[RMDB]
RNA sequence: GGGAACGACUCGAGUAGAGUCGAAAAGAUAUGGACAAGAUCUGGAGCAUUGGAGGUCGGAAACGACUACCCACCCAAUGAACUACUCCUAAGAUUGUCCUAAGUCAAAGGCACGUUCGCGUGCCAACCAUGGCUUAGGGUUCGCCCUAAGCCAUGGAAAAGAAACAACAACAACAAC
Reactivity to 2A3 in 0.01 (KOAc 150mM, MgCl2 10mM, bicine 150mM(pH8.5), 24C), signal-to-noise 2, nucleotides 027 to 126: g020a050u110a040u170g000g020a010c020a020a040g030a100u010c040u060g020g000a020g000c000a010u030u000g000g010a010g010g030u000c000g000g060a070a100a030c030g010a010c020u110a130c070c070c010a020c000c000c010a000a020u010g000a040a070c070u180a050c010u220c030c020u070a070a080g040a060u020u000g020u040c010c000u000a170a020g020u040c040a110a060a190g000g010c010a000c010g020u070u120c290g020c020g170u000g000c000c010a010a010
Reactivity to DMS in 0.01 (KOAc 150mM, MgCl2 10mM, bicine 150mM(pH8.5), 24C), signal-to-noise 2, nucleotides 027 to 126: g000a020u000a300u020g000g030a000c000a010a010g010a150u010c130u000g000g000a040g000c010a020u000u010g000g030a120g000g000u010c040g030g020a080a100a270c000g030a030c010u000a040c120c050c080a300c040c000c030a030a010u010g000a010a040c120u000a300c010u010c020c010u000a080a020g020a150u000u010g000u020c010c000u000a020a100g000u010c000a010a090a120g010g010c000a000c000g030u000u020c210g020c010g020u000g000c030c000a000a050

An RNA of 177 nucleotides, treated with 2A3 and DMS and read out base by base. The RNA was probed in 150 mM KOAc, 10 mM MgCl2 and 150 mM bicine (pH 8.5) at 24 C. The data come from the RNA Mapping Database (RMDB), library TTRDEL. DMS adducts were read by reverse transcription with MarathonRT.